[RMDB]
RNA sequence: GGGAACGACUCGAGUAGAGUCGAAAAGAUAUGGACGUUGAUCUUGAACUACAGGGAUGUAUCGGAAACGAUACUGACCUGCAAGGGAGUCCUAAGUCAAAGGGCAGGUAGUUCGCUACCUGCCCAAGCGUUCUUUUAAGUUCGCUUAAAAGAACGCAAAAGAAACAACAACAACAAC
Reactivity to DMS in 0.01 (KOAc 150mM, MgCl2 10mM, bicine 150mM(pH8.5), 24C), signal-to-noise 3, nucleotides 027 to 126: g010a040u000a240u010g000g010a010c010g030u000u020g010a030u010c010u000u010g010a090a110c160u020a300c010a000g010g000g000a260u010g000u000a010u000c010g000g000a100a020a190c000g000a020u010a000c000u010g010a300c020c000u000g010c000a020a010g000g020g000a050g010u000c000c000u000a030a100g000u000c010a120a100a140g010g010g000c010a000g000g010u010a000g010u000u010c250g010c010u010a010c000c000u000g000c000c000c000a000a010
Reactivity to 2A3 in 0.01 (KOAc 150mM, MgCl2 10mM, bicine 150mM(pH8.5), 24C), signal-to-noise 2, nucleotides 027 to 126: g010a010u100a050u120g000g020a010c040g130u170u060g020a030u000c010u000u000g020a090a140c100u230a080c300a020g010g000g020a020u090g020u010a000u000c000g000g000a060a040a020c010g000a000u000a010c010u010g010a020c000c000u000g000c000a000a010g000g000g000a010g010u020c000c000u010a080a010g030u010c060a010a080a300g000g000g000c020a000g000g000u020a000g010u040u110c260g020c150u000a000c000c010u010g010c000c000c000a010a000

Record summary: An RNA of 177 nucleotides, treated with DMS and 2A3 and read out base by base. In probing experiments dimethyl sulfate is read out at A N1 and C N3, which are open when not base-paired. For 2A3, 3,795 sequencing reads were counted. For DMS the reverse transcriptase was MarathonRT. Source: RMDB library TTRDEL, as collected in RNAgym. The RNA was probed in 150 mM KOAc, 10 mM MgCl2 and 150 mM bicine (pH 8.5) at 24 C. 2A3 is a SHAPE reagent: it acylates the 2'-hydroxyl of flexible nucleotides of all four kinds.